[RMDB]
RNA sequence: GGGAACGACUCGAGUAGAGUCGAAAAGAUAUGGAGGGAGCUCUGAACUACAGAAUAGUGUCGGAAACGACACGAAUUCUGCAGAGCGAAGAACUCCUAAGUCAAAACCGCCGGUUCGCCGGCGGAAUCAAUCUGAUAGGUUCGCCUAUCAGAUUGAAAAAGAAACAACAACAACAAC
Reactivity to 2A3 in 0.01 (KOAc 150mM, MgCl2 10mM, bicine 150mM(pH8.5), 24C), signal-to-noise 2, nucleotides 027 to 126: g020a010u070a040u140g000g020a010g040g010g020a100g020c000u030c010u020g050a100a100c080u210a060c240a000g000a010a000u040a020g020u010g020u010c010g000g040a020a100a060c010g000a010c000a010c000g010a010a070u010u000c000u020g000c010a000g010a020g000c040g030a100a000g000a050a050c010u000c000c010u020a110a000g030u010c040a020a060a150a240c000c000g000c030c000g000g100u060u050c260g030c140c000g040g000c000g020g020a000a010
Reactivity to DMS in 0.01 (KOAc 150mM, MgCl2 10mM, bicine 150mM(pH8.5), 24C), signal-to-noise 3, nucleotides 027 to 126: g000a010u000a300u000g000g000a080g030g000g010a100g000c000u000c000u000g000a060a030c060u020a300c010a000g000a020a000u000a170g000u010g000u000c010g000g000a110a040a190c010g000a020c000a010c000g010a060a070u000u000c000u010g000c000a000g000a020g000c000g020a090a080g000a190a190c010u010c010c010u010a050a100g000u000c020a090a070a130a180c010c000g010c010c010g000g000u010u000c220g010c000c000g020g000c020g000g000a000a030